RNA sequence: GGGAACGACUCGAGUAGAGUCGAAAAUCAUCUAUCUGGAAUGCUGGGAUAGAAUGAAACGACACCCACCUAACGACCGGAACUGGAUAUGCCUGACCGGGACAUUGCAUCGCAAAGGAGCUUUCCACUAUAUAAAUCCUUUCGAGGAUUUAUAUAGAAAAGAAACAACAACAACAAC
Reactivity to DMS in 0.01 (KOAc 150mM, MgCl2 10mM, bicine 150mM(pH8.5), 24C), signal-to-noise 7, nucleotides 027 to 126: u000c010a020u000c010u000a000u000c000u010g020g010a180a090u010g020c080u010g010g010g000a010u000a010g010a070a050u000g020a020a080a110c130g010a140c230a100c020c010c020a120c150c080u020a070a070c100g010a150c040c030g010g010a090a110c100u000g000g020a150u020a090u020g010c020c010u010g000a290c050c020g020g000g010a070c080a060u010u000g010c020a030u000c100g010c120a040a070a090g000g000a090g010c060u000u000u000c030c060a230
Reactivity to 2A3 in 0.01 (KOAc 150mM, MgCl2 10mM, bicine 150mM(pH8.5), 24C), signal-to-noise 6, nucleotides 027 to 126: u010c000a000u000c000u010a000u000c010u030g040g110a290a120u160g110c060u140g070g000g010a010u010a020g060a050a030u030g030a060a120a030c060g050a010c020a080c030c000c000a020c010c030u070a120a060c060g050a040c020c010g030g020a060a050c030u050g020g040a130u120a090u300g160c000c010u010g020a030c000c010g010g000g020a020c020a030u070u110g010c010a040u060c070g020c070a040a050a080g050g010a050g030c000u020u050u030c010c020a030